[RMDB]
Chemical mapping of a 207-nucleotide RNA with DMS and 2A3. The reactions ran in a buffer of 150 mM KOAc, 10 mM MgCl2 and 150 mM bicine (pH 8.5), at 24 C. Reactivities are given for positions 27 through 156.

RNA sequence: GGGAACGACUCGAGUAGAGUCGAAAAAACUGUAGGCUGUGAGAUGGGGAUGGGUUGCAAAUGAGGUCCACUCACUCCAUGGAGAUGUUUCUGCUUCCCUCCCAUCCAGAUGUUAACAGCUGGCUGCUCACCUUUGGAUUCCAGCUACACAACGUGAUGAUUUUACCUGGUUCGCCAGGUAAAAUCAAAAAGAAACAACAACAACAAC
Reactivity to DMS in 0.01 (KOAc 150mM, MgCl2 10mM, bicine 150mM(pH8.5), 24C), signal-to-noise 1, nucleotides 027 to 156: a080a070c010u020g070u010a160g000g010c060u010g000u000g030a160g020a040u010g020g020g010g010a080u000g030g010g050u040u000g000c070a010a060a040u010g030a080g010g020u000c080c050a090c030u010c040a190c130u000c050c100a080u030g020g000a110g000a090u000g000u000u000u010c030u010g020c060u000u000c010c010c020u010c010c010c010a020u010c000c010a140g010a090u010g020u010u010a060a080c040a090g060c000u000g010g010c060u000g010c010u000c010a090c060c060u010u000u020g040g000a280u010u000c020c000a110g000c090u000a160c050a050c050a080a090c160g000u030g010a300
Reactivity to 2A3 in 0.01 (KOAc 150mM, MgCl2 10mM, bicine 150mM(pH8.5), 24C), signal-to-noise 1, nucleotides 027 to 156: a010a000c130u130g030u040a040g110g000c000u010g060u120g070a220g060a050u040g000g000g060g010a070u070g000g020g000u000u020g000c000a030a020a160u090g040a020g050g040u080c030c020a070c050u070c000a070c000u000c040c020a100u170g000g000a050g030a040u110g080u030u050u040c060u010g010c000u030u020c010c020c010u030c000c000c000a000u000c000c020a010g020a120u130g040u150u090a090a020c000a030g000c020u000g040g000c030u020g020c000u010c040a090c030c060u050u040u160g040g000a010u110u000c010c010a020g000c010u070a030c070a000c000a150a070c050g040u070g040a120